Chemical mapping of a 170-nucleotide RNA with DMS and 2A3. For DMS the reverse transcriptase was MarathonRT. Values are in units of 0.01, from 0 to 300, in steps of 10. The RNA was probed in 150 mM KOAc, 10 mM MgCl2 and 150 mM bicine (pH 8.5) at 24 C.
RNA sequence: GGGAACGACUCGAGUAGAGUCGAAAAUAUUGUUAGACGACGUAUAGUGCAAAUGUUGUCAGACACUUUAGACAAAUUGUCUGAUUACUGUACGUUUGUUUGUUGGGCUCAUGGCUUUGAAUUAACGUAACCUGUGUCUUCGGACACAGGAAAAGAAACAACAACAACAAC
Reactivity to DMS in 0.01 (KOAc 150mM, MgCl2 10mM, bicine 150mM(pH8.5), 24C), signal-to-noise 2, nucleotides 027 to 129: u000a040u050u060g010u040u010a090g000a010c000g040a020c020g030u030a030u030a080g020u000g040c210a030a030a020u070g030u000u000g000u010c020a000g000a000c000a000c110u000u000u000a030g020a210c300a050a000a040u040u000g010u050c000u020g020a000u000u030a000c010u040g020u020a000c000g070u000u000u000g000u040u000u020g020u070u020g000g000g060c020u050c180a130u040g070g010c060u000u000u000g000a000a120u000u000a050a070c120g010u020a070a140
Reactivity to 2A3 in 0.01 (KOAc 150mM, MgCl2 10mM, bicine 150mM(pH8.5), 24C), signal-to-noise 2, nucleotides 027 to 129: u270a030u070u220g040u120u080a110g060a020c000g000a010c030g000u000a000u000a000g080u120g040c080a070a100a150u280g020u250u060g020u090c000a000g000a020c000a010c030u090u020u060a080g050a060c030a090a000a000u000u010g000u020c010u000g000a020u070u110a020c000u010g020u000a000c000g000u000u000u100g100u090u000u000g050u040u110g000g000g010c020u010c130a160u070g040g000c010u080u060u010g090a200a200u050u000a220a030c000g040u080a030a030